[RMDB]
RNA sequence: GGGAACGACUCGAGUAGAGUCGAAAACUAGGGAGGUCUUCAUUUAAUUGAAACGCAGGAGCGGACCUUGAAUAGUUGUGUGAACCUUCUAUUCUCAUCGGAAACGAUGCCCUUGCCCACCUUUAUGUUUAUGUCAGACAUUCGUGUCUGACAUAAAAAAAGAAACAACAACAACAAC
Reactivity to DMS in 0.01 (KOAc 150mM, MgCl2 10mM, bicine 150mM(pH8.5), 24C), signal-to-noise 4, nucleotides 027 to 126: c120u000a020g020g000g010a020g000g020u000c000u010u010c010a010u000u000u050a050a300u040u000g000a030a190a300c010g030c000a190g030g000a150g020c010g000g000a010c000c010u000u000g000a030a010u000a020g020u010u000g000u030g040u030g000a080a220c180c030u000u010c010u020a000u000u000c000u000c010a030u000c020g000g000a120a070a150c030g020a000u000g000c040c010c000u000u000g000c000c020c010a080c160c030u000u000u020a050u050g000
Reactivity to 2A3 in 0.01 (KOAc 150mM, MgCl2 10mM, bicine 150mM(pH8.5), 24C), signal-to-noise 6, nucleotides 027 to 126: c070u030a000g000g000g000a000g000g000u000c010u040u010c020a070u040u050u090a120a100u060u040g040a030a040a030c040g020c040a090g100g270a130g140c010g000g000a000c000c000u000u000g000a000a000u000a010g010u000u010g050u000g050u060g100a050a090c020c000u010u000c000u020a000u000u010c010u000c000a000u000c000g000g060a070a040a050c010g000a000u010g000c000c000c000u000u020g050c040c000c000a050c000c020u080u120u040a240u270g130
An RNA of 177 nucleotides, treated with DMS and 2A3 and read out base by base. The RNA was probed in 150 mM KOAc, 10 mM MgCl2 and 150 mM bicine (pH 8.5) at 24 C.